Chemical mapping of a 207-nucleotide RNA with 2A3. Values cover nucleotides 27 to 156. It was measured as part of the RMDB library ARCHII. For 2A3 the reverse transcriptase was SuperScript II with manganese. The 2A3 profile rests on 679 reads.
RNA sequence: GGGAACGACUCGAGUAGAGUCGAAAAAAAGUAACUGCGAAUAACAUCGUCAGCUUCAAACGGGUAGCCAUAGCAGCCUAGUCUGUAAAAGCUACAUUUUCUUGUCAAAGACCGUUUACUUCUUUUCUGACUCCGUUAAGGAUUAGAGGUUAACCCCGUGUGAGUAGUUCUUCGGAACUACUCACACAAAAGAAACAACAACAACAAC
Reactivity to 2A3 in 0.01 (KOAc 150mM, MgCl2 10mM, bicine 150mM(pH8.5), 24C), signal-to-noise 1, nucleotides 027 to 156: a010a000a000g040u040a040a010c000u000g000c010g010a020a010u090a150a020c020a120u030c050g100u120c070a030g000c070u190u120c040a050a020a000c040g100g000g000u000a000g000c020c020a070u120a060g010c010a000g000c000c160u160a060g040u150c010u020g040u060a000a000a000a130g000c000u010a000c010a020u020u070u040u000c000u000u090g240u120c070a110a080a000g010a000c000c030g000u000u010u010a020c000u010u010c000u010u070u000u000c000u060g020a020c050u010c010c060g060u080u150a110a030g000g030a070u000u060a010g010a020g020g030u060u060a040a040c000c000c000c040